The record gives the reactivity of an RNA of 177 nucleotides to 2A3 and DMS. The DMS profile rests on 2,742 reads. The RNA was probed in 150 mM KOAc, 10 mM MgCl2 and 150 mM bicine (pH 8.5) at 24 C. The data come from the RNA Mapping Database (RMDB), library OK1LIB. 2A3 adducts were read by reverse transcription with SuperScript II with manganese. Reactivities are given for positions 27 through 126.
RNA sequence: GGGAACGACUCGAGUAGAGUCGAAAAGAAUCUCACUUGGGCGGGUGCUUUAGUGACUCCAGCGCGUGGGGAUUUAUGUAUUAGUGAGAUUAUGAAUACGUUGAAAUGAUUACGCGCAAAGUAACAAGGGUAAACAUUUGUUCGCAAAUGUUUACCCAAAAGAAACAACAACAACAAC
Reactivity to 2A3 in 0.01 (KOAc 150mM, MgCl2 10mM, bicine 150mM(pH8.5), 24C), signal-to-noise 2, nucleotides 027 to 126: g070a000a000u000c000u000c010a010c010u010u080g060g000g030c000g060g120g130u300g000c000u110u110u090a020g000u050g080a100c000u010c000c010a090g000c040g010c020g000u010g020g000g000g000a020u010u020u020a050u010g070u000a000u000u070a040g090u100g030a060g030a300u030u260a040u180g130a040a050u040a000c040g000u030u130g150a000a000a010u010g020a020u040u030a010c000g050c000g000c040a070a060a050g120u150a000a110c150a050a130
Reactivity to DMS in 0.01 (KOAc 150mM, MgCl2 10mM, bicine 150mM(pH8.5), 24C), signal-to-noise 2, nucleotides 027 to 126: g010a070a030u000c000u000c000a000c020u000u020g000g000g010c040g030g000g030u040g000c010u010u010u000a060g020u000g010a130c020u020c010c050a150g000c000g000c010g000u000g000g010g000g000a030u000u020u000a020u000g030u010a030u000u010a040g010u040g030a100g000a080u030u040a020u000g000a040a020u000a010c050g000u040u020g000a060a020a000u000g000a090u000u010a000c000g010c010g050c030a160a090a140g030u000a050a120c270a100a190